[RMDB]
RNA sequence: GGGAACGACUCGAGUAGAGUCGAAAAUUCGGAUAUAUGCCUUAACUUUUGUGAAAAUUCUGAGAAUUGUUUCCAAUUCACAAUAUGGCAAUAUCCUAGAAUAAUGAACAGGAACUCUGUGCAAUGGCACUUUGAAAAAUUUCGAUUUUUCAAAGUGAAAAGAAACAACAACAACAAC
Reactivity to 2A3 in 0.01 (KOAc 150mM, MgCl2 10mM, bicine 150mM(pH8.5), 24C), signal-to-noise 9, nucleotides 027 to 126: u030u010c010g000g010a000u000a000u030a050u030g010c010c000u070u060a120a110c050u120u140u060u020g010u010g060a030a060a090a100u170u080c140u150g060a090g050a290a090u170u170g120u120u150u010c020c000a030a040u010u000c000a000c000a010a020u020a050u090g000g000c000a000a000u000a000u000c000c000u000a050g010a000a020u130a040a100u090g050a040a010c020a020g050g050a080a070c030u020c020u120g040u040g030c050a040a070u050g050g000
Reactivity to DMS in 0.01 (KOAc 150mM, MgCl2 10mM, bicine 150mM(pH8.5), 24C), signal-to-noise 7, nucleotides 027 to 126: u020u010c030g010g000a010u000a000u000a130u000g010c010c010u010u020a130a140c190u010u010u000u000g020u000g000a010a040a090a090u020u020c110u030g010a180g010a050a080u020u020g000u010u010u010c040c060a080a230u000u000c010a000c010a010a020u010a060u010g010g000c000a010a020u000a010u000c010c010u020a080g030a030a020u010a080a100u020g000a080a040c020a020g000g010a120a120c120u020c010u000g000u000g010c080a060a090u010g010g010

Source information: The record gives the reactivity of an RNA of 177 nucleotides to 2A3 and DMS.